[RMDB]
Conditions: 150 mM KOAc, 10 mM MgCl2 and 150 mM bicine (pH 8.5), 24 C. The record gives the reactivity of an RNA of 177 nucleotides to DMS and 2A3. High 2A3 reactivity points to a flexible backbone, as in loops and unpaired stretches.
RNA sequence: GGGAACGACUCGAGUAGAGUCGAAAAGAAAGGUAGUGGAAGAGGUCGGAACUGCCCACCGCCUUGGUUAUGACGGGUUUCUGUCAUACUAUAGCGGCGCGAAGUUGCGUACUUAUUCGAAUGCCAACCUGGUGAAGAGGUUCGCCUCUUCACCAGGAAAAGAAACAACAACAACAAC
Reactivity to DMS in 0.01 (KOAc 150mM, MgCl2 10mM, bicine 150mM(pH8.5), 24C), signal-to-noise 2, nucleotides 027 to 126: g000a060a070a140g010g020u010a050g060u020g030g000a000a000g010a050g000g000u000c000g000g000a000a010c000u000g010c020c160c050a180c020c010g010c000c030u040u070g010g020u000u040a000u000g010a000c000g000g000g010u050u090u060c010u000g000u040c030a000u000a000c020u000a040u000a140g000c010g000g000c110g000c260g030a150a000g000u020u000g000c010g000u040a010c030u000u000a170u010u000c000g000a040a070u000g000c000c000a150a170
Reactivity to 2A3 in 0.01 (KOAc 150mM, MgCl2 10mM, bicine 150mM(pH8.5), 24C), signal-to-noise 3, nucleotides 027 to 126: g130a010a080a000g050g040u100a070g090u110g130g020a030a030g010a030g020g000u030c000g020g040a020a010c010u050g030c010c030c010a000c000c000g000c010c010u020u030g030g000u260u130a010u010g000a000c000g000g080g010u030u230u300c020u030g010u000c000a000u000a000c000u010a000u030a010g010c030g000g000c010g000c070g090a070a020g010u010u020g110c000g030u080a040c000u010u070a040u080u000c000g030a060a010u070g000c000c010a000a040
Background
Source: RMDB library RFM100, as collected in RNAgym. For DMS the reverse transcriptase was MarathonRT.